RNA sequence: GGGAACGACUCGAGUAGAGUCGAAAAUUACCGCCCAGGAUGGGGUGCAGCGUUCCUGCAAUAUCCAGGGCACCUAGGUGCAGCCUUGUAGUGUUAGUGGACUUUAGGCUAAAGAAUUUCACUAGCAAAAAUCUUUAAGGGUUCGCCCUUAAAGAAAUCAUAUAUUCAACUUCGGUUGAAUAUAUGAAAAAGAAACAACAACAACAAC
Reactivity to 2A3 in 0.01 (KOAc 150mM, MgCl2 10mM, bicine 150mM(pH8.5), 24C), signal-to-noise 2, nucleotides 027 to 156: u110u010a040c010c000g000c010c000c000a020g040g000a000u050g030g030g030g120u040g010c010a000g020c040g080u120u110c000c000u000g010c000a010a050u060a020u130c000c020a010g000g000g000c000a040c000c020u030a050g010g080u080g090c060a040g120c020c020u090u130g080u140a120g030u000g000u060u000a000g000u000g000g020a000c010u050u030u060a080g100g080c060u130a080a090a020g040a060a030u000u060u080c020a020c010u030a010g010c010a010a090a100a070a140u000c000u000u000u010a000a010g030g000g010u030u050c080g060c010c000c000u000u000a000a000a000g000a010a000a000
Reactivity to DMS in 0.01 (KOAc 150mM, MgCl2 10mM, bicine 150mM(pH8.5), 24C), signal-to-noise 2, nucleotides 027 to 156: u000u000a040c040c070g010c020c000c010a060g000g000a070u000g030g000g010g020u000g050c010a070g010c080g030u000u000c110c000u000g020c060a060a140u000a070u000c020c030a100g030g030g100c020a020c020c030u000a080g010g010u000g010c010a130g000c050c100u020u000g020u000a120g030u000g000u000u000a010g020u000g000g000a060c110u010u000u000a100g020g030c140u000a120a110a160g010a060a080u000u010u000c010a020c020u000a030g000c010a030a180a070a090a140u000c030u000u000u000a010a010g010g050g020u000u010c300g030c000c000c000u000u000a000a000a020g000a030a060a120

This 207-nucleotide RNA was probed chemically with 2A3 and DMS. Values cover nucleotides 27 to 156. The 2A3 profile rests on 1,985 reads. For DMS, 3,122 sequencing reads were counted.